Source: RMDB library 15KREP, as collected in RNAgym. This 177-nucleotide RNA was probed chemically with 2A3 and DMS.
[RMDB]
RNA sequence: GGGAACGACUCGAGUAGAGUCGAAAAAUUCCUUUGAUGUUUCCCAGCCAGGGAUUUUCGACCUCAAGUUUCUUGAUCUUCUUCUUUGUCUUCCGGAGCUCCGCCUCGAGUUCCUCCGCUUUCUUUCAUCUAAGGAUAAGUUCGCUUAUCCUUAGAUAAAAGAAACAACAACAACAAC
Reactivity to 2A3 in 0.01 (KOAc 150mM, MgCl2 10mM, bicine 150mM(pH8.5), 24C), signal-to-noise 1, nucleotides 027 to 126: a000u050u030c010c000u020u050u120g050a040u050g020u030u080u060c000c000c030a020g020c010c010a020g010g070g000a030u080u060u000u070c030g030a030c010c020u060c020a060a090g050u030u130u060c000u060u060g040a090u040c020u100u000c000u070u000c000u090u110u050g050u030c000u050u000c020c020g030g000a020g010c030u020c040c030g030c050c010u020c010g000a010g020u040u000c000c020u010c050c000g050c030u000u040u000c000u000u030u030c020
Reactivity to DMS in 0.01 (KOAc 150mM, MgCl2 10mM, bicine 150mM(pH8.5), 24C), signal-to-noise 2, nucleotides 027 to 126: a190u000u000c010c000u000u010u000g020a060u000g000u010u010u000c010c020c010a250g010c070c110a060g010g010g000a030u000u000u000u000c050g000a100c030c050u000c050a070a160g010u000u000u010c020u010u000g010a070u010c040u010u000c030u000u010c020u000u010u010g000u000c050u000u000c010c020g010g010a160g020c040u010c050c050g030c090c010u000c020g010a080g000u000u000c100c090u000c080c070g010c130u000u010u000c010u010u000u010c020

For DMS the reverse transcriptase was MarathonRT.